[RMDB]
RNA sequence: GGGAACGACUCGAGUAGAGUCGAAAACUGCUUGAAGUGGCUUCUCCUGGGCGAUCGCUCGCUGUUUUUGUGGCUGGCUUUCAGCGGGCUGGAGGAGCCGGGAGCGGAGGCGGAGGACCGAGCCAAAGAUGCUAUGUUCACUUCGGUGAACAUAGAAGAACAUCUAAGUGUUCGCACUUAGAUGUUCAAAAGAAACAACAACAACAAC
Reactivity to 2A3 in 0.01 (KOAc 150mM, MgCl2 10mM, bicine 150mM(pH8.5), 24C), signal-to-noise 3, nucleotides 027 to 156: c000u060g030c030u060u120g080a120a050g050u100g090g000c000u020u020c000u030c000c010u070g080g070g080c080g040a090u090c100g000c010u000c010g000c010u010g060u050u040u020u060u090g070u040g040g050c070u030g030g010c000u010u050u020c010a010g000c010g000g020g000c050u050g000g010a020g010g020a010g030c000c000g000g020g000a030g010c060g020g020a020g020g040c090g020g020a040g040g020a020c030c070g040a020g010c030c010a030a060a030g090a030u160g040c000u010a010u000g000u000u010c000a000c000u050u020c140g060g000u000g000a000a000c000a000u000a000g000a020a040
Reactivity to DMS in 0.01 (KOAc 150mM, MgCl2 10mM, bicine 150mM(pH8.5), 24C), signal-to-noise 1, nucleotides 027 to 156: c070u000g020c020u000u000g020a070a160g020u000g060g000c010u000u000c010u010c010c030u000g000g000g070c070g030a100u000c090g030c000u000c040g040c010u000g030u010u000u000u020u000g030u000g000g010c070u010g000g000c120u000u000u010c020a070g020c010g010g000g030c000u020g010g000a070g020g010a060g030c000c020g000g000g010a050g020c090g000g000a160g010g010c060g030g000a220g020g000a120c050c050g000a090g030c030c030a060a050a130g010a120u000g010c010u000a000u000g000u000u000c000a010c000u000u000c300g090g010u000g010a030a000c010a000u010a000g010a040a080
Notes: Source: RMDB library M2RFPK, as collected in RNAgym. Structure probing data (2A3 and DMS) for a 207-nucleotide construct. For DMS, 2,889 sequencing reads were counted. For 2A3, 2,684 sequencing reads were counted. 2A3 adducts were read by reverse transcription with SuperScript II with manganese.